Chemical mapping of a 207-nucleotide RNA with DMS and 2A3. The RNA was probed in 150 mM KOAc, 10 mM MgCl2 and 150 mM bicine (pH 8.5) at 24 C. 2A3 adducts were read by reverse transcription with SuperScript II with manganese. The 2A3 profile rests on 2,097 reads.
RNA sequence: GGGAACGACUCGAGUAGAGUCGAAAACUCAGCCAUCAAUGGAAAACUCACGCGAGGCGCGAUAAGCCCAAUCGGAGAAGACAACGGAAAGUUCAUUUACCUGGUAUCUGGUUAUGCAGAUGCGUGGAAAUGCCAUUACUUCACUGGCGCGCAUGUCAUACGGAUGUUAUUUCGAUAACAUCCGUAUAAAAGAAACAACAACAACAAC
Reactivity to DMS in 0.01 (KOAc 150mM, MgCl2 10mM, bicine 150mM(pH8.5), 24C), signal-to-noise 2, nucleotides 027 to 156: c030u020c050a140g000c020c010a080u000c070a110a150u010g000g000a110a070a100a100c050u000c040a090c060g010c020g000a160g000g010c050g030c060g010a160u010a060a110g060c020c010c030a080a090u000c030g000g020a100g000a080a060g010a060c050a040a050c050g010g000a100a050a070g010u000u010c000a030u000u000u000a090c020c010u040g030g050u000a020u010c020u010g020g000u000u000a130u000g000c010a020g010a040u000g030c020g020u000g010g000a020a030a040u010g000c040c050a100u000u000a060c040u000u000c060a210c050u010g000g030c010g020c050g010c050a060u010g000u000c060
Reactivity to 2A3 in 0.01 (KOAc 150mM, MgCl2 10mM, bicine 150mM(pH8.5), 24C), signal-to-noise 4, nucleotides 027 to 156: c030u030c030a020g020c000c010a060u060c050a060a180u120g030g040a060a050a050a040c020u040c080a120c080g040c050g010a050g070g000c040g000c010g070a080u090a210a110g000c000c010c010a030a050u130c060g030g070a040g000a050a030g060a040c070a090a030c080g020g060a170a020a000g040u080u060c010a030u010u040u200a300c010c020u150g170g010u020a000u000c000u020g070g010u130u050a050u230g050c030a010g020a040u010g000c040g010u080g000g040a010a050a020u070g020c010c020a090u170u080a050c050u090u050c020a040c120u050g000g000c020g010c000g010c040a030u080g020u090c010